[RMDB]
RNA sequence: GGGAACGACUCGAGUAGAGUCGAAAAUGGGCCGAAUUUCUAUUUUGCGAAAACGUUGCAUUUUCUAACGCGUUCGGACACAAGUGGCACGCGUUUCCACGAAUUUUCACCUACUUACACUGUCGUAGACUCAGCCAUGAUUCGUCAUGGCUGAGUCAAAAGAAACAACAACAACAAC
Reactivity to DMS in 0.01 (KOAc 150mM, MgCl2 10mM, bicine 150mM(pH8.5), 24C), signal-to-noise 1, nucleotides 027 to 126: u000g010g000g060c030c010g000a030a060u000u020u000c030u030a090u000u000u000u000g000c100g030a050a030a060a080c150g040u000u030g000c100a080u000u000u000u000c090u000a040a150c120g010c210g030u000u000c020g030g010a070c060a070c200a110a100g010u000g010g010c190a090c030g010c080g000u020u010u020c040c010a030c060g010a110a120u000u000u000u010c000a040c000c000u000a010c020u000u000a130c180a150c120u020g000u000c010g000u000a090
Reactivity to 2A3 in 0.01 (KOAc 150mM, MgCl2 10mM, bicine 150mM(pH8.5), 24C), signal-to-noise 2, nucleotides 027 to 126: u040g010g030g000c000c000g020a020a020u000u130u000c040u030a150u110u140u130u120g050c050g050a050a030a070a060c120g130u120u120g040c050a080u050u060u060u000c070u060a090a020c040g010c000g040u040u020c000g070g050a020c030a010c000a120a200g000u080g040g000c070a030c030g050c000g050u030u060u000c020c000a020c040g050a050a050u050u040u000u040c040a020c010c020u010a020c010u030u060a030c060a050c130u060g000u040c000g030u060a040